[RMDB]
RNA sequence: GGGAACGACUCGAGUAGAGUCGAAAAAUUUAGUACGAGAGGAACUGUCAUGCCUGAUCACUGGUCUGUAGGUUUAUCUGACAAGAUAGUGACCUGCCGCUACCAUCAGUUCGUUAAUGGCUGAACGAAGACACAGGAACUUCGGUUCCUGUGUCUUAAAAGAAACAACAACAACAAC
Reactivity to DMS in 0.01 (KOAc 150mM, MgCl2 10mM, bicine 150mM(pH8.5), 24C), signal-to-noise 2, nucleotides 027 to 126: a110u010u030u010a020g030u020a060c020g010a070g000a080g000g000a090a070c050u000g000u020c040a050u010g000c000c020u000g020a090u020c090a060c100u010g010g010u000c120u010g020u020a070g000g000u020u020u000a030u000c000u010g010a090c300a010a010g010a040u020a020g000u000g010a020c000c000u000g010c010c090g030c070u010a080c050c080a030u010c040a040g010u000u010c130g040u000u040a060a110u000g010g010c000u020g000a050a090c140g000
Reactivity to 2A3 in 0.01 (KOAc 150mM, MgCl2 10mM, bicine 150mM(pH8.5), 24C), signal-to-noise 1, nucleotides 027 to 126: a000u020u040u150a000g040u040a130c060g050a070g100a030g220g020a060a170c000u000g080u030c000a000u150g020c000c000u000g000a000u000c000a000c010u000g140g040u110c050u000g080u000a030g000g130u020u020u010a020u000c000u000g030a030c000a020a100g030a000u110a000g130u010g190a100c000c020u050g000c000c050g020c030u140a020c030c000a010u110c000a000g080u060u080c000g000u050u110a000a090u140g000g010c000u000g070a010a000c040g000

The record gives the reactivity of an RNA of 177 nucleotides to DMS and 2A3. In probing experiments dimethyl sulfate is read out at A N1 and C N3, which are open when not base-paired. For 2A3, 534 sequencing reads were counted. It was measured as part of the RMDB libraries RFM100 and RFMREP.